[RMDB]
RNA sequence: GGGAACGACUCGAGUAGAGUCGAAAAAUGCAGUGGAGGAACAUGCCCGGAACGGGGGAUCGCUCAUCAUCACCGUGGACUGCGGCAUCUCCAGUGUGCGGGAGAUCACGAGAGCUGCCGAGCUCGGAGUUAGCAGAAACUUCGGUUUCUGCUAACUAAAAGAAACAACAACAACAAC
Reactivity to 2A3 in 0.01 (KOAc 150mM, MgCl2 10mM, bicine 150mM(pH8.5), 24C), signal-to-noise 2, nucleotides 027 to 126: a000u120g000c000a000g090u040g060g010a020g020g010a120a060c030a130u070g000c000c000c010g070g010a070a030c010g000g000g030g060g000a020u080c050g030c130u060c060a100u070c010a010u060c020a030c070c020g060u070g030g070a050c030u050g040c040g070g010c000a010u040c010u000c030c000a000g020u050g010u010g040c030g010g020g000a090g000a050u100c020a010c080g110a110g010a000g120c010u050g060c040c040g040a030g020c010u020c050g030g000
Reactivity to DMS in 0.01 (KOAc 150mM, MgCl2 10mM, bicine 150mM(pH8.5), 24C), signal-to-noise 3, nucleotides 027 to 126: a080u010g000c020a040g000u000g010g010a040g000g000a090a130c250a090u000g000c010c010c020g000g010a090a060c040g020g000g000g020g000a030u000c150g000c150u020c120a060u000c100a030u010c040a130c010c020g000u000g010g020a080c040u000g010c160g000g020c030a030u000c030u000c030c010a040g010u000g000u000g010c070g010g000g010a100g000a070u010c070a070c070g010a140g000a040g020c030u010g020c040c060g020a120g010c010u010c020g010g000